An RNA of 177 nucleotides, treated with DMS and 2A3 and read out base by base. It was measured as part of the RMDB libraries RFM100 and RFMREP. The RNA was probed in 150 mM KOAc, 10 mM MgCl2 and 150 mM bicine (pH 8.5) at 24 C. The 2A3 profile rests on 897 reads.

RNA sequence: GGGAACGACUCGAGUAGAGUCGAAAACUUAUAGCUUGAGACAGGGACGGGGUAAUUUUAUUUGGUAGCGAGAGGUGACAAUCGAUGACCUACCAAGGAGGACCGGAGGCGAAAGCGAUUACCAAGAUAUUUAGUGGGGUUUCGACCCCACUAAAUAAAAAGAAACAACAACAACAAC
Reactivity to DMS in 0.01 (KOAc 150mM, MgCl2 10mM, bicine 150mM(pH8.5), 24C), signal-to-noise 4, nucleotides 027 to 126: c090u000u040a100u020a140g010c080u000u020g010a160g000a110c090a050g000g000g020a070c080g020g000g010g010u020a030a050u050u040u020u020a040u040u010u000g000g000u010a020g000c010g000a020g000a050g000g000u030g000a150c220a090a110u010c020g020a010u010g000a040c300c000u020a020c020c030a020a040g030g010a040g000g000a070c070c050g000g010a070g000g010c050g000a080a040a090g030c040g010a110u010u020a100c040c020a090a130g000a150
Reactivity to 2A3 in 0.01 (KOAc 150mM, MgCl2 10mM, bicine 150mM(pH8.5), 24C), signal-to-noise 2, nucleotides 027 to 126: c010u060u080a020u170a180g010c010u000u130g060a040g010a090c050a060g020g050g010a040c030g030g050g050g000u060a080a240u010u050u000u130a150u000u030u020g000g010u000a000g000c000g000a000g000a020g000g000u090g050a060c100a020a070u010c040g080a140u010g010a010c000c000u010a000c000c010a000a010g110g020a070g000g070a040c050c110g060g000a030g000g000c060g000a040a010a000g010c000g010a030u020u010a040c030c030a010a000g050a110